[RMDB]
The data come from the RNA Mapping Database (RMDB), library TTRDES.
The record gives the reactivity of an RNA of 177 nucleotides to DMS.
The reactions ran in a buffer of 150 mM KOAc, 10 mM MgCl2 and 150 mM bicine (pH 8.5), at 24 C.
RNA sequence: GGGAACGACUCGAGUAGAGUCGAAAAAAAAAAAGAUAUGGAGCGUGGGAGUCGUGCGGAGAGUAUUAGUCGGAAACGACUGGGUACCUCGGAUAGCGACGACGAUCACGCUCCUAAGUCAAAAAAAGUUCAUAUAUUACUUCGGUAAUAUAUGAACAAAAGAAACAACAACAACAAC
Reactivity to DMS in 0.01 (KOAc 150mM, MgCl2 10mM, bicine 150mM(pH8.5), 24C), signal-to-noise 1, nucleotides 027 to 126: a000a010a010a040a050a050a080g020a020u000a300u000g000g000a010g010c020g030u000g000g000g020a300g000u000c010g020u000g000c020g010g020a040g000a150g040u000a000u000u000a040g020u010c000g010g020a120a100a110c000g010a000c000u000g010g040g040u000a000c000c010u000c000g000g020a140u000a230g000c050g020a000c010g000a020c000g050a300u030c020a000c010g000c000u000c000c000u000a010a040g010u060c000a020a000a050a120a030a080a210

Values are in units of 0.01, from 0 to 300, in steps of 10.
DMS adducts were read by reverse transcription with MarathonRT.